[RMDB]
RNA sequence: GGGAACGACUCGAGUAGAGUCGAAAAGACAAAGCCAAGGAGCUGAAGUCGCUUGAGAAAGAAAUUGCUGGCCAAGAUGAGGACCACUUCAUUACAGUGGACGCUGUGGGUUGCUUCGAGGGUGAUGCGUUUGUCGGUAGUUCGCUACCGACAAACGAAAAGAAACAACAACAACAAC
Reactivity to DMS in 0.01 (KOAc 150mM, MgCl2 10mM, bicine 150mM(pH8.5), 24C), signal-to-noise 1, nucleotides 027 to 126: g010a010c090a120a220a050g030c030c020a040a250g020g020a210g000c000u000g000a160a190g000u000c010g000c080u050u000g050a120g000a040a000a030g010a070a220a030u040u020g040c000u000g000g000c080c040a050a090g000a100u000g000a080g000g000a110c170c060a030c060u050u040c190a080u030u000a020c190a030g020u000g030g020a040c110g000c060u000g000u000g020g020g000u040u000g020c030u000u050c050g020a090g000g010g040u000g000a090u000g000
Reactivity to 2A3 in 0.01 (KOAc 150mM, MgCl2 10mM, bicine 150mM(pH8.5), 24C), signal-to-noise 1, nucleotides 027 to 126: g000a000c080a040a100a000g000c070c010a080a300g020g000a170g030c000u000g030a120a030g060u000c000g040c000u000u140g090a060g110a020a270a000g030a000a040a030u040u060g000c000u000g070g010c000c000a040a020g050a090u090g020a040g090g110a010c000c000a030c060u090u000c120a040u000u300a000c030a010g000u000g000g000a000c060g000c020u000g000u040g020g000g000u020u040g000c010u040u040c000g170a010g010g000g060u030g040a080u110g000